Conditions: 150 mM KOAc, 10 mM MgCl2 and 150 mM bicine (pH 8.5), 24 C. Chemical mapping of a 207-nucleotide RNA with 2A3 and DMS. For DMS the reverse transcriptase was MarathonRT.

RNA sequence: GGGAACGACUCGAGUAGAGUCGAAAAAGCACCUGCGUGCACGCAUCGACAAGAACGCUUUCUACCUCUACCUGUGCGAGAACAGGAACAUAUAUUCGCUGCUUGAGGAGAUAGUAGCUGCGUUACCUGAAGCCGUCUCAGUGACUUACUGCAGCUGAAGAUGCAUAAGCUUCGGCUUAUGCAUCUUAAAAGAAACAACAACAACAAC
Reactivity to 2A3 in 0.01 (KOAc 150mM, MgCl2 10mM, bicine 150mM(pH8.5), 24C), signal-to-noise 4, nucleotides 027 to 156: a000g070c020a040c010c060u080g030c080g060u070g010c030a010c090g060c020a070u080c040g080a080c060a130a020g090a120a070c060g010c020u020u080u030c010u070a170c020c000u030c000u040a080c010c000u030g010u030g040c090g080a060g030a080a030c010a010g000g060a090a020c050a010u250a010u050a090u070u150c050g010c050u080g010c000u080u100g010a020g030g020a020g010a010u080a010g070u040a000g000c010u000g020c020g060u030u030a050c000c000u020g040a030a020g060c050c030g130u050c020u000c050a040g020u070g130a120c040u040u130a020c050u140g000c000a020g010c000u000g060
Reactivity to DMS in 0.01 (KOAc 150mM, MgCl2 10mM, bicine 150mM(pH8.5), 24C), signal-to-noise 2, nucleotides 027 to 156: a100g010c040a180c020c020u010g030c120g070u000g020c030a140c100g020c000a150u010c030g000a170c070a060a070g020a040a110c060g030c020u000u010u010c020u000a110c000c000u000c050u000a150c010c000u010g020u010g000c030g000a270g000a150a070c030a040g010g020a100a110c060a110u020a130u000a160u000u000c070g020c040u000g010c040u000u010g000a170g020g010a120g010a100u000a080g030u000a040g030c000u000g020c010g040u000u000a050c080c010u030g020a080a090g020c040c030g010u020c050u000c040a160g000u010g010a060c020u010u000a080c050u010g020c000a030g060c020u000g040
Description
It was measured as part of the RMDB library OK3TST.